[RMDB]
RNA sequence: GGGAACGACUCGAGUAGAGUCGAAAACGGGCAACUGUGGGACGGCUCUGUAAAAAAGGAGAGGGAGUUCAUGAACAGCAACUCCCACUUCCAGUGGAUCGAAGGCACGCCGCGAGGCGCCCCGACGAAGAAGAAUCCGGUUCGCCGGAUUCUUCUUAAAAGAAACAACAACAACAAC
Reactivity to 2A3 in 0.01 (KOAc 150mM, MgCl2 10mM, bicine 150mM(pH8.5), 24C), signal-to-noise 1, nucleotides 027 to 126: c050g000g010g010c060a070a060c020u020g000u050g020g000g050a000c000g000g000c030u000c090u090g290u260a050a070a000a070a060a000g090g000a020g000a020g000g000g000a000g000u000u000c060a080u180g180a130a000c050a170g020c020a000a000c000u000c000c020c000a000c000u090u050c050c000a060g040u120g040g000a080u140c000g000a070a050g020g000c000a010c060g000c010c000g040c060g020a050g000g000c010g120c000c000c000c000g040a080c020g040
Reactivity to DMS in 0.01 (KOAc 150mM, MgCl2 10mM, bicine 150mM(pH8.5), 24C), signal-to-noise 1, nucleotides 027 to 126: c100g000g000g030c030a060a120c100u000g000u000g010g010g000a240c010g020g060c000u000c000u010g040u030a000a070a040a100a060a260g000g020a020g000a180g050g020g000a000g000u000u000c030a060u040g000a030a040c270a090g000c190a020a000c000u000c030c000c000a080c040u000u040c020c010a080g050u070g020g000a070u000c070g080a180a030g030g000c040a150c030g000c000c000g000c120g060a080g000g000c210g000c020c080c000c040g010a110c090g060